Chemical mapping of a 207-nucleotide RNA with 2A3 and DMS. Source: RMDB library M2RFPK, as collected in RNAgym.
[RMDB]
RNA sequence: GGGAACGACUCGAGUAGAGUCGAAAACCCAGUUCCGGGGCCGUUCACUGGAUCCGAAGCCUCUAGAAGGAUAAUAUAGGCACUCCAUACCCUACUCCGAAUCAAUACGUCCCCGUCGUACAGAAUGCAAGGGCAUCCCUGUUCGCAGGGAUGCCAAGUAAAUAACAACGUUCGCGUUGUUAUUUACAAAAGAAACAACAACAACAAC
Reactivity to 2A3 in 0.01 (KOAc 150mM, MgCl2 10mM, bicine 150mM(pH8.5), 24C), signal-to-noise 3, nucleotides 027 to 156: c000c000c000a000g040u110u030c020c000g000g020g000g010c010c010g040u060u070c050a040c130u040g060g030a060u060c020c020g050a080a010g040c000c000u080c060u070a150g070a180a080g120g020a050u080a220a050u160a080u040a080g010g000c040a020c070u100c020c010a090u060a180c020c000c010u030a060c030u020c030c020g020a010a020u080c010a040a080u040a110c010g000u000c030c000c040c000g030u010c030g000u060a040c010a100g130a150a090u140g090c060a070a080g080g000g030c000a000u000c000c000c010u010g020u070u060c200g050c070a000g000g000g030a000u000g000c000c000a000a000
Reactivity to DMS in 0.01 (KOAc 150mM, MgCl2 10mM, bicine 150mM(pH8.5), 24C), signal-to-noise 1, nucleotides 027 to 156: c010c020c010a160g030u000u000c000c030g010g040g000g070c020c040g010u010u000c070a200c100u000g030g060a040u000c020c030g030a100a070g010c050c050u010c070u010a120g000a210a130g030g000a170u010a050a230u000a170u000a090g010g010c030a080c060u010c060c030a230u000a100c070c040c010u000a060c000u000c010c000g030a060a020u010c000a060a140u000a060c030g030u000c010c000c010c010g000u010c070g020u000a120c030a100g010a100a100u000g030c050a090a130g040g010g040c000a030u010c030c010c030u000g010u000u020c230g030c010a040g020g040g000a030u010g080c020c010a010a010